[RMDB]
RNA sequence: GGGAACGACUCGAGUAGAGUCGAAAAGAUAUGGAGCGAUCAGACGCGAUGAAGGACUUGGGAGUAGGCGCAUCGGAAACGAUGCGCUACUUUGAUCAAGUCUGGAGCGUCUGAUCGCUCCUAAGUCCCUUCUUCUGAAGUUCGCUUCAGAAGAAGGAAAAGAAACAACAACAACAAC
Reactivity to DMS in 0.01 (KOAc 150mM, MgCl2 10mM, bicine 150mM(pH8.5), 24C), signal-to-noise 1, nucleotides 027 to 126: g000a040u000a100u020g020g000a010g050c000g010a020u000c020a010g000a010c000g030c010g010a140u010g020a220a280g000g020a010c000u000u000g010g000g000a010g010u000a020g010g030c010g010c010a000u000c010g000g000a050a040a110c000g020a040u000g010c020g000c010u000a000c010u000u000u040g000a170u020c000a010a010g000u000c000u000g000g010a030g020c010g040u000c010u020g010a010u010c000g010c010u000c000c000u000a000a060g000u000c010
An RNA of 177 nucleotides, treated with DMS and read out base by base.
The reactions ran in a buffer of 150 mM KOAc, 10 mM MgCl2 and 150 mM bicine (pH 8.5), at 24 C.
Values cover nucleotides 27 to 126.